[RMDB]
RNA sequence: GGGAACGACUCGAGUAGAGUCGAAAACGCUGGGAGCGGAACCGGUAGCGACAUGGCUUACUGAUUUCGCUGAAGCGCGCACGGCGAAAGAUGUAAGCCAACAGCGCUACCUCAGUACGCUCCUGUGCUGAAGCGCGCACGGCAACCGAAAGGUGCGGAUCUCAGUUAUCUUCGGAUAACUGAGAUCAAAAGAAACAACAACAACAAC
Reactivity to DMS in 0.01 (KOAc 150mM, MgCl2 10mM, bicine 150mM(pH8.5), 24C), signal-to-noise 1, nucleotides 027 to 156: c020g080c060u010g030g000g020a010g040c000g010g030a110a100c130c300g000g010u000a030g010c010g090a200c060a280u000g050g000c010u010u010a000c020u000g000a300u000u020u010c000g020c000u010g000a070a090g000c020g010c100g120c080a300c020g020g020c000g000a010a010a110g000a300u020g010u000a000a040g030c000c000a000a030c150a020g030c060g000c000u000a020c000c010u000c020a000g020u000a190c000g010c010u000c030c000u030g000u020g000c000u060g000a060a030g070c000g020c010g020c020a210c070g030g030c080a120a100c020c020g030a050a130a140g030g030u000g010c020g010
Reactivity to 2A3 in 0.01 (KOAc 150mM, MgCl2 10mM, bicine 150mM(pH8.5), 24C), signal-to-noise 2, nucleotides 027 to 156: c050g000c000u060g000g000g010a010g000c000g010g010a000a000c010c020g000g000u000a000g000c010g170a260c110a220u220g000g030c010u010u020a000c000u030g190a170u000u000u000c000g010c010u010g020a110a040g000c000g000c010g020c000a040c020g000g000c000g010a000a010a000g030a010u110g010u000a000a000g020c020c030a000a000c000a000g020c010g000c000u010a000c000c000u000c000a000g000u000a000c000g000c000u010c010c000u000g010u030g000c040u120g040a080a020g000c010g010c000g000c030a000c050g070g000c040a130a170c030c020g080a150a070a030g030g000u050g010c010g050